[RMDB]
RNA sequence: GGGAACGACUCGAGUAGAGUCGAAAAUAACUAGAAGGAAAUUCUCUAAAAUGGUUAGUGGGACCGAAUCCAGGUAAAUGUCUGAUUCUUGAAUGAGGAUAGAUAUUAUCCGUUAAAUUAUCAAAAACCAUAAAUCGGUGUUCGCGCUGAUUUAUGGAAAAGAAACAACAACAACAAC
Reactivity to 2A3 in 0.01 (KOAc 150mM, MgCl2 10mM, bicine 150mM(pH8.5), 24C), signal-to-noise 5, nucleotides 027 to 126: u030a000a040c040u050a050g050a110a060g110g050a050a120a110u170u020c040u000c010u070a070a160a110a160u110g030g020u030u030a060g030u110g060g040g020a020c020c010g050a050a040u040c040c000a020g000g010u030a050a060a020u020g010u000c020u050g080a040u040u000c010u060u120g190a190a110u240g010a040g000g010a010u020a040g020a010u070a020u060u040a040u040c010c000g000u010u010a080a180a060u160u100a090u080c040a010a030a080a040a110
Reactivity to DMS in 0.01 (KOAc 150mM, MgCl2 10mM, bicine 150mM(pH8.5), 24C), signal-to-noise 9, nucleotides 027 to 126: u000a070a090c060u000a090g010a130a160g010g000a080a130a130u010u000c020u000c040u010a050a080a140a120u010g000g010u000u000a060g010u000g010g010g010a080c050c050g010a090a150u010c070c070a100g010g010u000a050a050a040u000g010u000c020u000g000a100u000u000c010u000u000g010a100a080u020g010a040g000g000a050u000a010g010a040u000a020u000u010a070u010c010c010g010u000u010a040a060a070u000u000a060u010c060a050a060a080a100a100
Background: The record gives the reactivity of an RNA of 177 nucleotides to 2A3 and DMS. For 2A3 the reverse transcriptase was SuperScript II with manganese. It was measured as part of the RMDB library OK2TRN. Conditions: 150 mM KOAc, 10 mM MgCl2 and 150 mM bicine (pH 8.5), 24 C.